[RMDB]
RNA sequence: GGGAACGACUCGAGUAGAGUCGAAAAGGGAACACAAUGGUCGUUCCUGAAGACCGUCCGGUCGUCAUUCGAACGACCUCUCGUGAUGUGAUCCAUGGCUUCCAUGUGCCAAAGAUGGCAUUAAAACAGGAUUCGAUGCCAGGACAGGUUAAUUCCAGGAUAGGGGAUCAUUCGUGAUCCCCUAUCCAAAAGAAACAACAACAACAAC
Reactivity to DMS in 0.01 (KOAc 150mM, MgCl2 10mM, bicine 150mM(pH8.5), 24C), signal-to-noise 1, nucleotides 027 to 156: g010g000g010a010a020c080a040c060a160a110u000g000g020u010c020g010u000u000c000c060u000g000a020a030g020a030c020c000g000u010c230c130g060g070u010c010g000u010c020a090u000u000c080g010a010a010c010g000a020c010c000u000c040u020c150g000u000g010a110u000g010u010g030a080u040c030c000a220u000g010g060c040u010u000c050c040a210u000g040u000g040c010c030a010a130a120g010a180u010g010g020c020a030u000u010a040a060a070a150c090a160g000g000a300u000u000c060g000a040u000g010c000c010a110g030g000a090c110a110g000g000u020u000a060a150u000u010c010c030a300
Reactivity to 2A3 in 0.01 (KOAc 150mM, MgCl2 10mM, bicine 150mM(pH8.5), 24C), signal-to-noise 1, nucleotides 027 to 156: g000g020g050a020a000c060a020c020a000a060u160g090g000u020c000g000u000u010c000c020u010g000a050a030g000a000c050c040g100u220c090c120g030g000u000c030g000u000c000a100u110u170c130g000a020a000c000g000a030c000c000u000c010u010c010g000u050g020a170u110g020u020g160a130u090c000c000a090u090g010g000c010u110u000c050c000a080u140g020u060g040c010c000a070a070a050g160a180u020g010g000c000a000u000u110a030a140a080a050c080a050g050g020a030u110u040c040g010a000u140g010c000c010a010g030g010a030c030a020g020g000u090u000a020a010u260u050c000c010a000